Structure probing data (2A3 and DMS) for a 177-nucleotide construct.
Conditions: 150 mM KOAc, 10 mM MgCl2 and 150 mM bicine (pH 8.5), 24 C.
Values are in units of 0.01, from 0 to 300, in steps of 10.
For 2A3 the reverse transcriptase was SuperScript II with manganese.
RNA sequence: GGGAACGACUCGAGUAGAGUCGAAAAUAUGAAUAAGAAUUCCGGUCUUUUCCGGAGCCACCAAGUGGAAUGCUACGUGCAUAAAUGCACGUAGCUAAAGACCCGAAGGCUAGCAAUAGCUAGCCUACGGAUGCGUAAUAUUCGUAUUACGCAUCCGAAAAGAAACAACAACAACAAC
Reactivity to 2A3 in 0.01 (KOAc 150mM, MgCl2 10mM, bicine 150mM(pH8.5), 24C), signal-to-noise 5, nucleotides 027 to 126: u210a040u070g060a040a100u180a170a040g090a080a120u070u000c010c010g010g020u030c170u060u130u080u010c010c000g010g000a010g000c010c000a010c030c070a180a140g040u050g060g030a090a050u130g020c010u000a000c010g000u000g010c010a030u120a280a220a030u220g000c010a000c000g000u000a000g000c000u000a000a000a000g020a030c000c000c030g060a020a000g000g000c000u000a000g000c020a070a300u030a150g000c000u000a000g000c000c000u000a020
Reactivity to DMS in 0.01 (KOAc 150mM, MgCl2 10mM, bicine 150mM(pH8.5), 24C), signal-to-noise 2, nucleotides 027 to 126: u010a050u010g000a160a080u020a170a150g000a120a150u030u000c000c010g010g010u000c300u000u030u090u000c000c000g010g030a030g000c020c010a050c000c150a080a160g020u000g000g020a140a040u030g010c000u000a000c020g040u000g020c030a020u030a030a070a100u040g000c000a000c000g000u030a010g000c000u040a020a090a090g000a140c010c010c010g010a090a050g000g000c000u000a000g000c000a150a080u010a010g000c000u000a010g000c000c000u000a020